[RMDB]
RNA sequence: GGGAACGACUCGAGUAGAGUCGAAAAUGGUAGUCCGCCACUCUAAGGGGACGCCUUUAGAAGAAGAGGCUAGGUGGUAUUCCGGUGUGGGAUACUUGGUAAUAUGUAACGCUGAUUGCAUAAGAUUAAAACUUUGCAUACUUCGGUAUGCAAAGAAUCUCUCUAAUUUCUUCGGAAAUUAGAGAGAAAAAGAAACAACAACAACAAC
Reactivity to 2A3 in 0.01 (KOAc 150mM, MgCl2 10mM, bicine 150mM(pH8.5), 24C), signal-to-noise 2, nucleotides 027 to 156: u070g040g010u030a130g020u040c040c010g090c120c070a070c030u150c060u110a110a120g000g010g000g010a000c000g050c000c000u060u070u060a070g010a070a000g020a040a020g030a030g010g030c050u060a020g000g070u060g010g010u040a040u080u020c030c060g110g040u150g010u110g060g000g000a040u050a030c010u060u100g030g020u020a060a050u000a090u140g040u030a000a020c020g000c120u050g060a210u000u040g000c010a020u030a080a030g030a090u080u170a030a060a050a060c000u010u000u000g000c000a000u000a000c000u020u010c020g040g000u000a000u010g000c000a000a010a000g000a000a000
Reactivity to DMS in 0.01 (KOAc 150mM, MgCl2 10mM, bicine 150mM(pH8.5), 24C), signal-to-noise 2, nucleotides 027 to 156: u000g000g040u010a080g000u000c010c010g020c000c020a280c040u030c030u000a060a070g000g000g040g010a100c210g010c020c020u020u010u000a030g010a120a080g000a090a090g000a150g000g000c020u000a030g050g000u010g030g010u000a070u010u000c030c000g020g030u020g010u000g000g010g000a110u010a030c010u000u000g010g000u000a070a110u000a090u010g000u000a070a080c040g000c040u010g010a100u000u000g000c020a100u000a060a130g010a240u020u010a030a110a180a150c000u000u000u000g000c000a040u000a000c000u000u030c250g050g000u000a000u000g000c030a010a000a010g000a060a160